[RMDB]
RNA sequence: GGGAACGACUCGAGUAGAGUCGAAAAUGGGUGCUAACAGGGCGUUCUUUGGUGGGGAGAACUGCGCCGGAACCACUUUCAGACCCCGCCUCUGGCAUUGGUCGCGACCGGUGGGCCGUACUCUCUAGGGAAUGAUUUACUUCGGUAAAUCAUUCCCAAAAGAAACAACAACAACAAC
Reactivity to 2A3 in 0.01 (KOAc 150mM, MgCl2 10mM, bicine 150mM(pH8.5), 24C), signal-to-noise 3, nucleotides 027 to 126: u100g020g020g000u060g050c050u080a070a040c100a130g020g020g030c020g010u060u020c000u050u060u100g080g000u000g000g000g030g020a050g030a060a020c030u090g030c050g010c040c010g030g020a030a020c010c000a040c070u070u160u100c060a040g010a150c070c000c000c020g010c050c020u040c040u060g030g000c070a090u090u110g050g000u060c020g010c040g110a030c010c010g000g020u040g010g060g000c020c020g010u020a060c030u020c010u000c010u070a030
Reactivity to DMS in 0.01 (KOAc 150mM, MgCl2 10mM, bicine 150mM(pH8.5), 24C), signal-to-noise 1, nucleotides 027 to 126: u040g010g000g020u020g020c050u000a130a110c100a020g010g030g070c000g010u000u000c000u010u070u030g000g020u000g120g000g000g000a070g000a060a080c070u050g070c050g020c040c000g010g010a120a070c110c010a010c070u000u020u050c090a020g000a040c030c020c180c070g050c050c070u060c050u030g000g020c030a050u020u000g010g000u000c070g060c220g000a050c040c140g000g020u000g020g000g000c080c010g000u000a100c110u050c000u000c000u040a300